[RMDB]
RNA sequence: GGGAACGACUCGAGUAGAGUCGAAAACUAUUUCAGCGAAAUAAUUAAAGUAUGUGUCAUUAUAGACAGCAAUUGAAUUAUUGAAUGAGAUAAUGUUUGCAUCGCUUUUGAUUUGGCUAUAGUCAAAGCAUCCCUGCCGUUUCGACGGCAGGGAUGCAAAAGAAACAACAACAACAAC
Reactivity to 2A3 in 0.01 (KOAc 150mM, MgCl2 10mM, bicine 150mM(pH8.5), 24C), signal-to-noise 1, nucleotides 027 to 126: c000u100a000u000u000u190c090a010g000c000g300a120a000a000u100a000a090u210u000a050a050a030g000u050a000u000g000u000g000u000c000a000u050u200a000u260a070g000a030c060a000g020c000a000a000u050u070g110a170a060u000u300a000u000u000g000a230a090u000g000a040g000a000u040a110a170u230g060u060u300u200g070c110a110u160c010g000c090u060u000u000u000g240a180u060u150u190g030g100c000u000a030u210a270g000u000c030a020a020a020
Structure probing data (2A3) for a 177-nucleotide construct. 2A3 adducts were read by reverse transcription with SuperScript II with manganese. The RNA was probed in 150 mM KOAc, 10 mM MgCl2 and 150 mM bicine (pH 8.5) at 24 C. The 2A3 profile rests on 249 reads.